[RMDB]
RNA sequence: GGGAACGACUCGAGUAGAGUCGAAAACGGCCUGACGUGACCCUUCCAAGUACGGGGUCACGACGCGAAAGCGGGGCCUAGCGAACGCUCGUGCCCCCACACGUGGGGGCCGGGCAUGACAGAAAAGUUACCCCGGGGAUAACAGGGUCGUCGCGGGACAUCGAAUUAGAUUCGUCUAAUUCGAUGUAAAAGAAACAACAACAACAAC
Reactivity to 2A3 in 0.01 (KOAc 150mM, MgCl2 10mM, bicine 150mM(pH8.5), 24C), signal-to-noise 3, nucleotides 027 to 156: c020g010g010c020c010u050g070a030c000g000u010g010a010c000c000c000u050u060c140c040a190a040g070u090a100c100g000g000g000g000u010c000a010c010g000a010c000g030c010g040a190a020a010g010c010g020g000g010g040c030c030u000a020g020c010g060a040a050c060g010c010u010c000g120u250g010c020c010c000c040c000a010c000a000c090g060u090g000g000g000g040g000c000c000g000g030g000c000a000u020g020a010c010a020g090a040a100a050a030g060u090u100a090c000c010c000c020g030g000g000g020a040u060a190a060c040a110g060g000g000u010c060g070u000c010g060c080g030g020g000
Reactivity to DMS in 0.01 (KOAc 150mM, MgCl2 10mM, bicine 150mM(pH8.5), 24C), signal-to-noise 2, nucleotides 027 to 156: c050g010g000c000c000u000g030a140c030g010u000g010a020c000c000c000u000u000c090c080a120a200g000u020a110c070g000g010g000g000u010c000a000c020g020a080c020g000c040g010a100a150a210g000c020g030g000g020g040c010c030u020a030g010c030g000a160a080c080g010c000u000c020g030u020g040c010c000c000c010c000a030c110a060c240g030u010g000g000g010g050g100c040c000g000g000g030c000a010u000g000a290c070a220g000a030a080a120a110g010u010u000a100c040c000c010c050g000g000g000g000a140u010a070a130c060a130g020g010g010u010c020g010u000c020g010c020g020g000g020
Overview
Structure probing data (2A3 and DMS) for a 207-nucleotide construct. For DMS the reverse transcriptase was MarathonRT. For 2A3 the reverse transcriptase was SuperScript II with manganese. For 2A3, 2,365 sequencing reads were counted. The reactions ran in a buffer of 150 mM KOAc, 10 mM MgCl2 and 150 mM bicine (pH 8.5), at 24 C.